[RMDB]
RNA sequence: GGGAACGACUCGAGUAGAGUCGAAAAAGGAGCUUUCAGGCCAGUGCUUUAAAAUACUCUAUAAGGGCAAUGUGACGCAUGAUGCUAGCUCUGCCAUUAAUAGACCACAACUCACAUUUGUGAAGAAACGGACUCUUCUUCGGAAGAGUCAAAAGAAACAACAACAACAAC
Reactivity to DMS in 0.01 (KOAc 150mM, MgCl2 10mM, bicine 150mM(pH8.5), 24C), signal-to-noise 8, nucleotides 027 to 129: a090g000g000a070g010c000u010u020u020c110a050g010g010c000c070a080g020u030g000c060u020u000u010a060a060a090a060u000a120c050u000c060u000a080u000a100a080g000g000g000c000a070a050u040g000u020g000a080c180g040c000a020u060g000a150u070g040c000u040a070g040c030u020c060u040g020c090c030a050u000u000a010a010u020a040g000a100c090c050a040c130a020a100c070u040c090a070c030a210u030u040u040g000u040g010a050a050g020a070a060a100c140g010
Reactivity to 2A3 in 0.01 (KOAc 150mM, MgCl2 10mM, bicine 150mM(pH8.5), 24C), signal-to-noise 9, nucleotides 027 to 129: a000g070g000a010g010c010u030u070u100c040a010g040g000c000c010a030g000u030g020c020u040u050u100a070a110a040a040u180a090c020u000c030u050a060u050a210a130g040g000g000c020a050a060u090g020u050g030a030c060g010c040a050u170g060a080u200g130c020u020a020g010c000u010c060u010g000c010c010a020u050u080a040a070u050a050g070a030c020c010a020c040a090a070c030u050c020a050c030a160u060u130u140g020u020g030a060a070g060a060a090a010c060g030